[RMDB]
RNA sequence: GGGAACGACUCGAGUAGAGUCGAAAAACAGUACCAGCUGCUACGGCAGCUGGUACUGAACUUUCAUGGAGUUAAGAAACCACGUAAACAAAGCGGAACCGAAAAGCUAAACGAGUAGGAAGAUUAAAUAGGUACCACCACUUCGGUGGUGGUACAACUGUAUCAUAUUGUUCGCAAUAUGAUACAGAAAAGAAACAACAACAACAAC
Reactivity to 2A3 in 0.01 (KOAc 150mM, MgCl2 10mM, bicine 150mM(pH8.5), 24C), signal-to-noise 2, nucleotides 027 to 156: a000c000a000g000u010a000c000c000a040g000c010u000g050c010u030a050c230g170g000c010a000g070c000u000g010g000u000a010c000u000g000a000a000c000u030u110u110c010a060u080g100g010a020g050u140u080a100a030g040a100a090a010c030c000a050c070g050u120a060a060a110c050a090a140a000g000c000g030g030a090a070c010c000g020a020a000a000a000g060c080u180a230a040a000c020g000a010g030u000a010g080g040a060a010g040a050u160u150a040a050a070u140a100g030g020u000a000c000c000a000c000c000a020c020u040u020c200g080g000u010g010g000u000g000g010u000a000c000a000a000
Reactivity to DMS in 0.01 (KOAc 150mM, MgCl2 10mM, bicine 150mM(pH8.5), 24C), signal-to-noise 1, nucleotides 027 to 156: a160c000a000g020u040a000c000c020a030g030c020u000g080c020u000a110c300g130g050c030a000g040c010u000g000g000u000a010c000u000g030a010a050c020u000u000u010c010a090u010g000g050a160g020u000u030a070a120g050a190a110a160c020c000a020c000g090u000a100a020a190c060a020a120a120g000c000g020g020a060a100c020c090g010a130a080a050a050g000c050u000a060a060a060c110g050a140g040u000a120g010g000a070a090g010a160u010u000a070a040a020u000a130g000g030u000a000c000c010a000c000c000a000c010u000u000c270g060g050u000g020g050u000g020g050u010a030c000a000a070